[RMDB]
Chemical mapping of a 207-nucleotide RNA with DMS and 2A3. For 2A3 the reverse transcriptase was SuperScript II with manganese.
RNA sequence: GGGAACGACUCGAGUAGAGUCGAAAAAGGCGGCAGUCCUCAGUACUCUUACUCUUUGUUUGUAAAGAGGAGACUGCUGGACUCGCCGCCCAAGUUCGAGCUUGGGCCACAGUUCCGAGCGAAGAGACGCGGGUGGAAGGGAUCAGCGCCCGAGAGGCUUAGCGUGAUAGUUCGCUAUCACGCUAAGAAAAGAAACAACAACAACAAC
Reactivity to DMS in 0.01 (KOAc 150mM, MgCl2 10mM, bicine 150mM(pH8.5), 24C), signal-to-noise 1, nucleotides 027 to 156: a100g000g040c030g000g050c000a120g020u000c000c020u000c030a000g020u000a090c050u040c040u000u020a300c020u040c000u000u000u010g020u030u000u010g030u010a070a010a060g000a050g040g010a070g000a100c010u000g040c160u030g020g010a000c010u000c200g000c010c000g000c020c010c000a000a150g050u000u000c050g000a130g000c040u000u000g010g050g010c040c080a210c140a080g020u000u000c010c000g040a110g060c050g000a090a140g000a130g010a170c040g040c050g010g030g020u020g010g000a120a160g020g000g040a030u010c010a110g080c000g050c020c010c040g000a070g000a170g020g000
Reactivity to 2A3 in 0.01 (KOAc 150mM, MgCl2 10mM, bicine 150mM(pH8.5), 24C), signal-to-noise 4, nucleotides 027 to 156: a010g020g000c010g000g010c000a010g000u000c010c010u000c000a060g010u160a300c010u000c030u070u140a160c010u060c020u060u230u100g230u280u220u210g190u300a020a020a000g000a000g010g000a000g010a000c010u000g040c090u010g020g000a010c010u030c090g000c000c000g000c000c000c000a020a030g030u010u090c030g030a010g040c000u000u010g030g020g000c030c100a190c060a150g050u110u020c000c010g010a030g030c020g040a120a040g030a030g020a060c030g010c050g020g040g010u080g030g050a080a080g090g030g010a080u130c050a030g090c010g000c040c010c030g000a020g010a020g040g000